This 207-nucleotide RNA was probed chemically with 2A3. Source: RMDB library RNAMAK, as collected in RNAgym. The 2A3 profile rests on 504 reads. The RNA was probed in 150 mM KOAc, 10 mM MgCl2 and 150 mM bicine (pH 8.5) at 24 C.
RNA sequence: GGGAACGACUCGAGUAGAGUCGAAAAAGUUACUUCGGUAACUAAACUCGCGUACUACUUGAGGGACCUCUUUUGACGAGCGCGUCUCCCAAAUAGGAGACGGCUCGAUAAGAGGUCCUACCCACCAAGUAUCGCAAAACAAGACAUUCGUGUCUAAUCCAGGGAACAAAUUCGUUUGUUCCCUGGAAAAAGAAACAACAACAACAAC
Reactivity to 2A3 in 0.01 (KOAc 150mM, MgCl2 10mM, bicine 150mM(pH8.5), 24C), signal-to-noise 1, nucleotides 027 to 156: a000g010u020u000a030c030u060u080c210g100g000u010a010a010c010u010a200a090a030c040u070c080g040c010g040u100a150c040u000a000c010u050u000g000a020g000g000g000a000c000c000u010c070u040u020u100u110g300a300c090g020a030g000c300g000c000g250u000c000u050c000c010c010a300a180a020u300a160g000g000a010g000a030c000g040g000c000u000c000g000a020u000a000a000g000a000g010g000u010c000c000u000a000c000c000c000a000c000c000a000a000g000u040a110u300c040g030c000a020a000a020a020c000a050a050g240a010c020a060u000u160c180g160u050g040u090c000u160a070a150